Annotation:
Chemical mapping of a 207-nucleotide RNA with DMS and 2A3. It was measured as part of the RMDB library RNAMAK. Values cover nucleotides 27 to 156. The DMS profile rests on 4,074 reads. 2A3 adducts were read by reverse transcription with SuperScript II with manganese. For 2A3, 1,295 sequencing reads were counted.

RNA sequence: GGGAACGACUCGAGUAGAGUCGAAAAGGAUGGGUGCUUCGGCACCCAUCCAAAAAACCUUUGUGUACCGAGAGGUAGCUAGGUCCCAUUGGGACCUUGGACCUACUACCCACCUCGACACUCUGGUAAAAAAGUCAAGCAGUUCGCUGCUUGACAACAGAGAAUAGGGAUUCGUCCCUAUUCUCUGAAAAGAAACAACAACAACAAC
Reactivity to DMS in 0.01 (KOAc 150mM, MgCl2 10mM, bicine 150mM(pH8.5), 24C), signal-to-noise 2, nucleotides 027 to 156: g020g020a030u000g030g020g040u030g030c020u010u000c300g090g000c000a010c040c020c000a000u000c000c000a000a000a040a090a060a020c010c010u000u010u020g010u000g020u000a000c200c000g000a060g040a080g000g000u000a020g010c080u000a030g020g010u000c000c000c040a300u000u010g030g040g020a080c060c050u000u000g000g010a090c110c010u000a060c000u000a040c000c000c030a050c220c000u000c020g000a060c010a020c020u010c030u010g040g020u010a010a100a060a070a080a100g020u000c000a000a010g050c020a030g010u000u010c300g020c010u020g050c000u000u000g000a020c020a000a070
Reactivity to 2A3 in 0.01 (KOAc 150mM, MgCl2 10mM, bicine 150mM(pH8.5), 24C), signal-to-noise 2, nucleotides 027 to 156: g020g020a000u030g000g000g040u010g030c060u090u130c300g080g020c000a020c010c000c010a020u020c000c020a000a000a000a000a000a000c030c000u030u000u000g010u000g000u030a040c010c060g010a000g000a020g000g000u000a020g000c130u010a000g000g030u000c050c010c010a180u230u220g230g030g030a160c040c000u000u010g000g000a000c000c000u000a000c010u000a010c000c020c030a160c040c000u010c000g000a010c000a000c000u000c000u030g010g000u000a100a150a010a060a020a000g000u010c000a000a000g000c020a010g000u040u190c200g150c090u010g000c000u000u000g000a000c000a020a020